[RMDB]
RNA sequence: GGGAACGACUCGAGUAGAGUCGAAAAUUUGUAGCUCUCGUGACAUUUGAUGGAUUAACAGGGAGAAAGAUAUAUUUACGACACUAUGAUGAGAUGUUUAAUGAGGUGUCUUGCACUCCUUAUUCCGACUUAGCUAUCGUCAAUGUGAAAUAUGAGCAUCCGCUCUGUAGUUCGCUACAGAGCGGAUAAAAGAAACAACAACAACAAC
Reactivity to 2A3 in 0.01 (KOAc 150mM, MgCl2 10mM, bicine 150mM(pH8.5), 24C), signal-to-noise 1, nucleotides 027 to 156: u040u030u030g130u160a010g000c000u000c000u040c210g290u150g070a000c040a000u000u040u060g040a020u070g060g050a090u110u120a300a000c090a180g030g000g030a000g100a060a000a000g010a050u150a000u020a000u060u100u170a060c040g000a000c050a000c000u040a010u200g110a040u130g010a220g020a120u050g160u010u090u160a130a110u120g050a000g050g050u000g000u000c000u020u060g000c000a000c010u010c000c000u000u070a110u110u090c000c000g010a040c010u030u130a020g000c050u070a010u210c000g070u040c000a000a000u070g000u000g060a000a190a000u050a070u020g000a000g000c000

Conditions: 150 mM KOAc, 10 mM MgCl2 and 150 mM bicine (pH 8.5), 24 C.
Chemical mapping of a 207-nucleotide RNA with 2A3.
Values cover nucleotides 27 to 156.